RNA sequence: GGGAACGACUCGAGUAGAGUCGAAAAGAUAUGGAUUAGAACUACUUUCACAGUGGCGUUGAAAUCGGAAACGAUGGAGCCAUCACAGAAGCUAAUCCUAAGUCAAAUCCUACGUUCGCGUAGGAAAGGGAGGACGUAAGUUCGCUUACGUCCUCCCAAAAGAAACAACAACAACAAC
Reactivity to DMS in 0.01 (KOAc 150mM, MgCl2 10mM, bicine 150mM(pH8.5), 24C), signal-to-noise 2, nucleotides 027 to 126: g000a000u000a300u000g000g000a020u000u010a020g000a060a050c040u010a180c020u000u020u000c000a180c300a160g000u000g010g010c000g000u000u020g000a030a100a010u010c000g000g000a070a070a110c000g040a030u000g000g040a180g000c000c000a000u010c040a140c300a250g000a050a030g000c000u020a000a020u000c000c020u030a030a140g000u000c050a090a060a120u000c010c000u000a000c010g040u000u000c250g020c000g050u000a000g000g000a040a040a030
Reactivity to 2A3 in 0.01 (KOAc 150mM, MgCl2 10mM, bicine 150mM(pH8.5), 24C), signal-to-noise 2, nucleotides 027 to 126: g000a010u050a000u100g000g000a000u030u040a020g000a090a030c070u180a040c010u300u210u210c080a130c040a130g050u020g020g000c060g160u300u070g080a120a150a010u010c020g040g000a060a040a020c010g000a000u000g020g000a010g090c020c000a000u020c000a030c020a030g020a030a000g000c000u000a000a000u000c000c000u010a100a010g070u010c040a040a050a140u000c000c000u000a010c010g000u020u110c300g000c000g100u000a020g030g000a080a110a000